[RMDB]
RNA sequence: GGGAACGACUCGAGUAGAGUCGAAAACUAUGGACCGCCUGUAAAUGCAUAGGCGAUCCCGAUGGCGAUAAGCCUACGAGAAUAAAUUGGCGUACCGGAACAGUAAGGACUAUGGUAGUGCCUCCCAAACCUGGGACAAAGCCGUGUUUAAAAAAGCCAGGUAAAUCAAGUUCGCUUGAUUUACCUGAAAAGAAACAACAACAACAAC
Reactivity to DMS in 0.01 (KOAc 150mM, MgCl2 10mM, bicine 150mM(pH8.5), 24C), signal-to-noise 1, nucleotides 027 to 156: c060u000a130u000g030g000a020c010c000g000c000c000u020g120u000a120a110a160u050g010c130a120u000a010g030g000c000g030a020u000c040c000c080g020a100u000g010g040c010g000a130u010a060a140g020c040c010u000a110c080g010a130g010a090a180u000a060a040a090u000u000g000g000c050g010u020a050c020c000g030g040a130a090c060a100g000u000a110a100g020g010a110c040u000a070u000g040g000u010a080g020u010g060c010c000u000c010c040c020a050a110a160c080c080u010g010g040g020a090c080a060a130a160g030c020c000g020u000g030u010u000u000a000a030a080a030a080a260g000c150
Reactivity to 2A3 in 0.01 (KOAc 150mM, MgCl2 10mM, bicine 150mM(pH8.5), 24C), signal-to-noise 4, nucleotides 027 to 156: c030u040a130u120g010g000a030c010c000g010c000c000u030g030u090a060a170a140u210g050c050a040u040a070g000g010c010g010a010u020c000c000c020g090a090u090g000g000c010g060a170u060a260a030g000c020c000u050a060c050g070a030g090a120a030u110a060a100a030u060u120g000g000c010g020u010a010c000c020g040g040a100a020c020a080g100u160a140a100g070g000a020c040u090a070u080g020g040u010a040g100u010g070c000c010u030c010c000c000a010a130a140c040c070u040g000g000g020a020c060a020a080a010g020c040c040g030u030g020u030u100u070a060a150a030a030a000a000g030c040